[RMDB]
RNA sequence: GGGAACGACUCGAGUAGAGUCGAAAAGGUCCAACAAGGAAAACGUCGGUUCCGAUGGGCCCCGGAACGUGGACGUUGAGGUCGGGUGUGGAUGAAACAGCGAUCGACAGGAAUCAUAGAUCCACAACAGCAGUAUGCCUUUCGAGGCAUACUGCUGAAAAGAAACAACAACAACAAC
Reactivity to DMS in 0.01 (KOAc 150mM, MgCl2 10mM, bicine 150mM(pH8.5), 24C), signal-to-noise 2, nucleotides 027 to 126: g000g010u020c010c000a000a140c190a080a060g040g010a030a030a060a050c020g040u030c040g000g000u000u000c000c000g000a210u050g000g010g000c060c000c050c000g040g000a030a030c000g040u020g020g000a020c000g020u000u010g010a150g000g020u010c170g000g010g030u020g010u020g000g000a090u000g040a060a050a220c070a170g000c060g000a040u000c110g020a060c110a160g040g000a060a050u000c030a010u040a070g000a130u010c000c000a050c100a120a150
Reactivity to 2A3 in 0.01 (KOAc 150mM, MgCl2 10mM, bicine 150mM(pH8.5), 24C), signal-to-noise 2, nucleotides 027 to 126: g040g000u020c020c000a000a040c040a050a110g250g010a080a000a030a070c000g060u000c100g010g040u000u040c040c010g030a120u170g070g030g000c000c000c020c000g000g020a040a000c100g120u180g070g020a000c010g010u020u050g030a090g020g020u130c080g000g000g050u090g010u040g000g020a020u050g120a000a090a150c020a040g000c020g060a020u030c010g020a020c030a120g160g000a000a000u080c000a040u010a040g110a080u000c000c060a000c010a130a060